[RMDB]
RNA sequence: GGGAACGACUCGAGUAGAGUCGAAAAGAUGGACAGAUUAUUGUAUUCGACUGUAUUCACGGCGUGAAAUAGGGAUUACACUGUUUUUUAAACGGAAAGUGAAUCAAUUAACAUAAUAGACUCCUAACCUCGCCUUAGUGUUCGCACUAAGGCGAGGAAAAGAAACAACAACAACAAC
Reactivity to 2A3 in 0.01 (KOAc 150mM, MgCl2 10mM, bicine 150mM(pH8.5), 24C), signal-to-noise 1, nucleotides 027 to 126: g070a000u000g100g000a000c050a050g160a040u030u030a000u000u220g080u000a000u000u000c050g170a300c190u000g060u170a220u000u000c050a000c000g100g000c020g000u100g000a030a030a030u300a180g050g000g000a000u040u060a030c000a000c000u000g210u100u000u000u000u080u300a030a000a000c130g080g000a050a050a050g000u000g000a000a000u060c000a000a240u080u110a010a020c100a000u040a150a070u050a080g100a050c000u000c020c080u020a110a110
An RNA of 177 nucleotides, treated with 2A3 and read out base by base.
Reactivities are given for positions 27 through 126.
The RNA was probed in 150 mM KOAc, 10 mM MgCl2 and 150 mM bicine (pH 8.5) at 24 C.
For 2A3, 413 sequencing reads were counted.